[RMDB]
An RNA of 177 nucleotides, treated with 2A3 and DMS and read out base by base. The data come from the RNA Mapping Database (RMDB), library OK1LIB. For DMS, 6,070 sequencing reads were counted. For 2A3 the reverse transcriptase was SuperScript II with manganese.
RNA sequence: GGGAACGACUCGAGUAGAGUCGAAAAUAUACAUCUGAAGUCGGCACAACACCCGACUCGCGGUGAGCGAUGCAGCGUAGCUUAUGCUACGCAGCUGCUGUGCGGAAGGCUAGCAAAAGCUAGCCUACGUACGGCGAUAGUUCGCUAUCGCCGUACGAAAAGAAACAACAACAACAAC
Reactivity to 2A3 in 0.01 (KOAc 150mM, MgCl2 10mM, bicine 150mM(pH8.5), 24C), signal-to-noise 5, nucleotides 027 to 126: u170a010u040a020c080a080u060c040u080g050a060a010g020u000c000g000g070c110a030c030a300a300c030a140c010c000c000g010a000c000u000c010g000c020g000g050u090g020a030g000c010g120a120u110g000c000a000g000c020g010u010a000g000c040u300u130a130u300g000c000u000a000c000g000c000a000g010c000u040g000c010u010g030u100g020c040g060g090a150a010g010g010c000u020a000g000c000a200a160a130a040g000c000u000a010g000c000c000u010a010
Reactivity to DMS in 0.01 (KOAc 150mM, MgCl2 10mM, bicine 150mM(pH8.5), 24C), signal-to-noise 4, nucleotides 027 to 126: u030a110u060a150c120a060u050c040u020g020a140a010g020u000c000g020g000c140a090c130a140a140c300a140c290c000c000g000a020c050u000c030g000c090g000g000u010g010a140g010c030g010a040u010g000c000a040g020c000g020u000a010g000c010u010u020a170u060g020c000u010a000c000g010c000a010g020c020u000g000c020u000g000u010g000c020g010g000a140a030g000g010c010u000a000g020c000a070a060a110a150g000c000u000a000g000c000c010u000a010